An RNA of 177 nucleotides, treated with 2A3 and DMS and read out base by base. It was measured as part of the RMDB library 15KREP. The 2A3 profile rests on 3,869 reads. Conditions: 150 mM KOAc, 10 mM MgCl2 and 150 mM bicine (pH 8.5), 24 C. 2A3 adducts were read by reverse transcription with SuperScript II with manganese. Values cover nucleotides 27 to 126. The DMS profile rests on 2,496 reads.
RNA sequence: GGGAACGACUCGAGUAGAGUCGAAAAUCAUCCCACUGUGUGCUUCAAAUAAACUUCGCGUUGUAAUUCCUGACUUCACCGUCUGGAAUCAGGUAGUCACAUAUCCCUCGCUUAACUACGCUGGGGCGUAGAUUCAUCACUUCGGUGAUGAAUCUACAAAAGAAACAACAACAACAAC
Reactivity to 2A3 in 0.01 (KOAc 150mM, MgCl2 10mM, bicine 150mM(pH8.5), 24C), signal-to-noise 4, nucleotides 027 to 126: u080c010a030u010c000c020c000a020c050u050g010u000g020u030g070c010u040u020c030a100a110a240u210a150a120a030c030u070u060c150g030c060g080u050u070g080u120a040a040u020u000c000c010u020g000a010c030u040u050c090a020c020c030g010u040c020u040g010g020a010a010u030c020a010g030g080u050a000g030u040c010a000c010a040u060a080u120c010c010c000u020c020g030c010u100u080a140a060c050u070a060c140g010c030u010g020g000g000g000c020
Reactivity to DMS in 0.01 (KOAc 150mM, MgCl2 10mM, bicine 150mM(pH8.5), 24C), signal-to-noise 4, nucleotides 027 to 126: u010c250a170u000c000c000c000a140c210u000g010u000g010u010g010c020u010u000c030a110a130a110u000a090a060a030c050u010u010c100g010c070g020u010u000g010u000a080a080u000u000c010c000u000g000a010c020u000u000c270a150c250c190g020u010c020u000g020g000a020a040u000c120a090g000g010u000a000g030u000c050a010c040a060u000a050u000c000c000c000u010c200g030c030u000u000a070a110c130u000a060c120g010c030u000g020g010g000g030c300